The record gives the reactivity of an RNA of 177 nucleotides to 2A3 and DMS. Reactivities are given for positions 27 through 126. Source: RMDB library OK2TST, as collected in RNAgym.

RNA sequence: GGGAACGACUCGAGUAGAGUCGAAAAUAGCUCUCUCUUGUGCUUCUUCAAUCAUCUGAGCAGCCUGGCUUUGCGCAGAGCUUACGAUUGAAUUUGCUUGAGCCUGAGCCGUGCGCAAGCGCCUCUCGAUACCGAUGGCAUUCGUGCCAUCGGUAUCAAAAGAAACAACAACAACAAC
Reactivity to 2A3 in 0.01 (KOAc 150mM, MgCl2 10mM, bicine 150mM(pH8.5), 24C), signal-to-noise 2, nucleotides 027 to 126: u130a010g000c000u000c000u010c000u010c020u030u060g050u070g060c020u030u060c000u050u040c000a020a070u030c000a050u030c050u090g010a020g000c040a020g060c030c040u060g020g000c050u110u100u270g020c090g000c020a010g040a040g070c010u010u050a040c100g060a060u010u120g060a070a080u030u060u120g050c020u010u060g030a020g000c000c030u000g000a010g010c050c010g050u040g000c030g020c070a130a030g050c020g020c020c010u020c010u000c070
Reactivity to DMS in 0.01 (KOAc 150mM, MgCl2 10mM, bicine 150mM(pH8.5), 24C), signal-to-noise 2, nucleotides 027 to 126: u000a070g010c020u000c000u000c030u000c030u000u010g020u000g000c030u000u000c050u000u000c050a020a040u010c020a110u000c090u000g000a030g040c020a090g000c110c030u000g010g020c050u010u010u010g000c070g010c000a120g000a060g000c120u000u010a080c180g020a090u000u000g000a030a040u000u000u000g000c030u000u000g000a070g010c090c080u000g000a060g030c040c090g020u010g000c060g000c070a100a120g010c090g000c050c060u000c040u010c110